An RNA of 207 nucleotides, treated with DMS and read out base by base. Values cover nucleotides 27 to 156. Conditions: 150 mM KOAc, 10 mM MgCl2 and 150 mM bicine (pH 8.5), 24 C.
[RMDB]
RNA sequence: GGGAACGACUCGAGUAGAGUCGAAAAGUGCCAGAGAAGUUGUAUAUUGGGCUACCAUCCAGUGAUGCAAUGUAGGCUUAUUAGGGUUGUCAGUUUUCCACAGGGUAGCAAUUAAAACUGUCUGAAAAAAACGAAACCACCUUCGGGUGGUUUCGAACUUCGAAAAAAAGUUCGCUUUUUUUCGAAGAAAAGAAACAACAACAACAAC
Reactivity to DMS in 0.01 (KOAc 150mM, MgCl2 10mM, bicine 150mM(pH8.5), 24C), signal-to-noise 1, nucleotides 027 to 156: g010u000g020c020c010a160g030a170g030a090a250g000u030u000g010u000a080u000a090u000u010g020g050g030c050u010a110c090c000a160u010c070c040a080g010u000g020a110u000g020c060a070a030u020g000u000a080g020g000c050u010u000a090u010u010a160g000g010g030u010u020g020u000c000a050g010u000u000u000u000c010c010a150c070a230g010g020g030u010a040g040c000a020a140u010u000a060a050a050a000c020u000g000u000c020u020g000a010a000a070a110a090a130a210c030g010a010a010a010c000c000a030c010c010u000u010c300g060g040g110u000g000g000u000u000u000c000g010a040a020